[RMDB]
Chemical mapping of a 177-nucleotide RNA with DMS and 2A3. The RNA was probed in 150 mM KOAc, 10 mM MgCl2 and 150 mM bicine (pH 8.5) at 24 C.

RNA sequence: GGGAACGACUCGAGUAGAGUCGAAAAAGGAGCCUCCAAUGGGCCUCACGUAUUCAUCUAGAUGGCGCUUCGGACAACGGCAUCACAUAAGAGAUGCAGCUCCUGACUUCUCCUCUGAUCUUCGUGACGGUCCUAUUAUGUUCGCAUAAUAGGACCGAAAAGAAACAACAACAACAAC
Reactivity to DMS in 0.01 (KOAc 150mM, MgCl2 10mM, bicine 150mM(pH8.5), 24C), signal-to-noise 2, nucleotides 027 to 126: a020g040g020a040g000c000c090u000c010c010a030a050u000g010g000g010c000c020u000c020a040c200g000u010a110u000u000c280a080u000c100u000a130g010a060u000g000g040c030g000c030u000u000c140g040g000a010c060a060a060c250g000g050c000a010u000c000a110c190a170u010a070a080g030a080g010a010u000g000c010a230g000c010u010c000c020u000g000a070c120u000u000c010u000c000c120u010c050u000g000a140u000c090u000u000c020g030u000g000a180
Reactivity to 2A3 in 0.01 (KOAc 150mM, MgCl2 10mM, bicine 150mM(pH8.5), 24C), signal-to-noise 2, nucleotides 027 to 126: a040g000g010a030g000c010c000u000c020c010a040a060u030g020g020g010c000c000u020c000a020c050g100u100a160u180u210c140a230u000c020u110a050g020a110u220g040g000c130g020c080u040u040c050g040g000a020c050a100a030c100g000g030c000a000u010c010a050c020a080u260a090a080g030a010g000a080u000g000c010a000g000c010u000c020c030u000g010a030c010u100u040c000u030c030c010u060c000u060g130a140u020c050u160u060c070g050u040g040a030